[RMDB]
RNA sequence: GGGAACGACUCGAGUAGAGUCGAAAAAGCAGUCAUUACGAUGACUGCACCGUCGAUGACGACCAAGAGUUAUCCCUGUCUGAAUGAUUGUGAGGACAAAAGACUAUGGUAACACUCCGAGACUAAAUAUCUUGAAUUGGUUCGCCAAUUCAAGAUAAAAAGAAACAACAACAACAAC
Reactivity to 2A3 in 0.01 (KOAc 150mM, MgCl2 10mM, bicine 150mM(pH8.5), 24C), signal-to-noise 9, nucleotides 027 to 126: a000g000c000a000g000u000c000a000u030u090a080c300g120a020u010g000a000c000u000g000c010a010c010c030g050u030c020g050a090u130g050a080c050g010a020c000c030a110a100g010a010g040u030u030a050u070c010c040c010u010g020u000c010u020g100a180a180u110g100a250u230u150g050u050g120a080g010g040a020c000a030a110a010a000g040a010c060u080a050u190g050g000u070a130a030c030a010c100u020c030c020g030a030g010a050c030u090a020a060a100
Reactivity to DMS in 0.01 (KOAc 150mM, MgCl2 10mM, bicine 150mM(pH8.5), 24C), signal-to-noise 5, nucleotides 027 to 126: a140g020c000a000g010u000c000a010u000u010a120c190g010a050u000g000a010c000u000g010c000a030c150c120g060u010c020g000a070u020g000a180c230g000a070c060c030a070a130g000a020g000u000u000a150u020c020c010c020u010g000u010c010u000g010a160a050u010g000a100u040u030g030u020g010a280g000g000a020c030a020a020a100a080g010a030c040u010a080u000g000g010u010a030a090c110a080c090u000c010c030g000a070g000a100c100u020a020a060a090
Chemical mapping of a 177-nucleotide RNA with 2A3 and DMS.
It was measured as part of the RMDB libraries RFM100 and RFMREP.
Reactivities are given for positions 27 through 126.